This 177-nucleotide RNA was probed chemically with 2A3 and DMS. DMS adducts were read by reverse transcription with MarathonRT. Reactivities are given for positions 27 through 126. The reactions ran in a buffer of 150 mM KOAc, 10 mM MgCl2 and 150 mM bicine (pH 8.5), at 24 C.

[RMDB]
RNA sequence: GGGAACGACUCGAGUAGAGUCGAAAAGAAAGACCAAGGGGCCGGGUUGUACCGCGUCAACUGGAGCGGCAUGACCUAGGGGUAAACGGGGUACCUCCGCAGCCGCGGGCCGGGUCAGGCGAGCUAACUGCUUUUUAAUGUUCGCAUUAAAAAGCAGAAAAGAAACAACAACAACAAC
Reactivity to 2A3 in 0.01 (KOAc 150mM, MgCl2 10mM, bicine 150mM(pH8.5), 24C), signal-to-noise 1, nucleotides 027 to 126: g060a030a050a030g040a020c030c020a060a070g040g000g010g010c010c000g000g000g000u000u020g010u040a050c000c010g020c020g130u070c050a150a150c110u160g090g020a030g020c010g020g000c020a030u060g010a020c020c020u060a040g010g020g010g000u040a030a150a010c040g020g030g020g020u020a020c000c010u040c000c010g000c030a030g050c020c080g110c030g040g000g000c020c010g010g010g010u030c030a010g050g030c020g020a020g020c050u060a030a090
Reactivity to DMS in 0.01 (KOAc 150mM, MgCl2 10mM, bicine 150mM(pH8.5), 24C), signal-to-noise 4, nucleotides 027 to 126: g010a100a120a150g000a120c030c020a070a110g020g010g000g010c050c050g000g000g000u000u010g020u000a090c000c010g010c000g010u010c060a150a090c160u050g000g000a160g000c010g010g010c050a040u000g010a050c000c010u010a090g020g020g010g000u000a040a100a140c090g000g010g010g040u000a050c040c040u010c000c020g010c050a130g000c090c080g000c030g020g000g020c020c030g010g000g000u000c060a050g010g010c070g000a100g010c060u000a070a170